[RMDB]
Overview: Structure probing data (2A3 and DMS) for a 207-nucleotide construct. Conditions: 150 mM KOAc, 10 mM MgCl2 and 150 mM bicine (pH 8.5), 24 C. Source: RMDB library OK3TST, as collected in RNAgym. For 2A3, 1,814 sequencing reads were counted.
RNA sequence: GGGAACGACUCGAGUAGAGUCGAAAAUGGAAUACGGCACACAGCCCGGUCAUCGCCCGCCAAUCCGUCCUCUGGCAGACUGGGCGGAGAGAAUCGGGAAGGAUCGUGGGUUCGGUAUCUACGUGGCUACGCAAGUCAUACCGGAGCAAGGAGUCCAAUGAUCCAAUAGGUUCGCCUAUUGGAUCAUAAAAGAAACAACAACAACAAC
Reactivity to 2A3 in 0.01 (KOAc 150mM, MgCl2 10mM, bicine 150mM(pH8.5), 24C), signal-to-noise 2, nucleotides 027 to 156: u100g020g020a100a040u130a160c050g020g000c030a020c000a000c020a080g020c030c030c030g020g030u030c040a050u080c060g080c010c010c000g010c040c010a040a040u080c010c020g030u020c000c020u040c060u060g080g070c040a050g020a090c050u050g000g000g000c000g000g000a020g000a020g000a020a090u140c010g000g010g010a050a050g120g010a010u040c020g040u080g010g000g000u070u090c040g030g010u050a050u050c020u030a030c040g050u030g040g000c010u070a040c090g040c170a060a020g010u010c020a010u020a060c010c050g010g000a040g040c050a070a030g040g010a030g040u030c020c020a010
Reactivity to DMS in 0.01 (KOAc 150mM, MgCl2 10mM, bicine 150mM(pH8.5), 24C), signal-to-noise 1, nucleotides 027 to 156: u000g000g030a070a150u000a080c040g020g000c070a120c070a120c060a120g050c000c000c040g000g020u010c010a110u000c060g010c020c000c000g050c050c000a060a180u000c000c030g010u000c000c030u000c070u000g030g030c140a110g010a090c030u010g000g020g040c000g010g020a190g000a300g000a110a100u000c040g000g000g010a130a100g010g020a030u000c050g030u000g010g010g020u000u020c030g030g000u020a030u000c000u010a020c020g030u000g010g020c070u000a070c080g050c050a000a070g020u000c190a170u000a050c000c010g000g000a080g000c090a080a070g000g000a120g000u000c030c050a120